[RMDB]
RNA sequence: GGGAACGACUCGAGUAGAGUCGAAAAGGCGGUGCCAAGACUCCCGAGCAGCCAUCCGCUAAAACCUACGGCAUAUGACAUGUGUGUUAUGGCCAUCGCAGCGCAGGAGGAACUGUUGCAACAGAUCCGGAUGCGGCAAGUUCGCUUGCCGCAUCCGAAAAGAAACAACAACAACAAC
Reactivity to 2A3 in 0.01 (KOAc 150mM, MgCl2 10mM, bicine 150mM(pH8.5), 24C), signal-to-noise 2, nucleotides 027 to 126: g100g000c000g030g020u030g040c090c030a040a000g030a040c030u010c000c000c000g050a000g030c100a000g010c020c000a070u020c020c010g040c000u020a020a040a110a090c020c000u040a030c050g000g000c020a090u040a020u080g050a020c100a120u070g040u090g030u040g060u300u060a090u120g000g110c080c020a010u060c020g080c120a050g000c050g000c090a050g010g020a010g060g040a090a130c000u020g040u080u080g000c000a010a010c000a000g020a040u020c090
Reactivity to DMS in 0.01 (KOAc 150mM, MgCl2 10mM, bicine 150mM(pH8.5), 24C), signal-to-noise 1, nucleotides 027 to 126: g020g000c050g000g000u010g000c050c080a140a060g020a140c120u000c000c030c040g030a190g000c050a090g030c040c110a120u000c000c060g050c080u000a000a080a210a110c050c120u000a050c050g000g000c000a120u030a030u000g000a050c060a060u010g090u070g000u010g040u000u000a020u000g020g060c040c000a060u000c040g000c000a070g050c000g000c050a090g010g000a070g000g020a100a160c090u040g050u030u020g050c080a150a090c060a000g000a230u030c150
Structure probing data (2A3 and DMS) for a 177-nucleotide construct. Reactivities are given for positions 27 through 126. For 2A3, 622 sequencing reads were counted. The RNA was probed in 150 mM KOAc, 10 mM MgCl2 and 150 mM bicine (pH 8.5) at 24 C.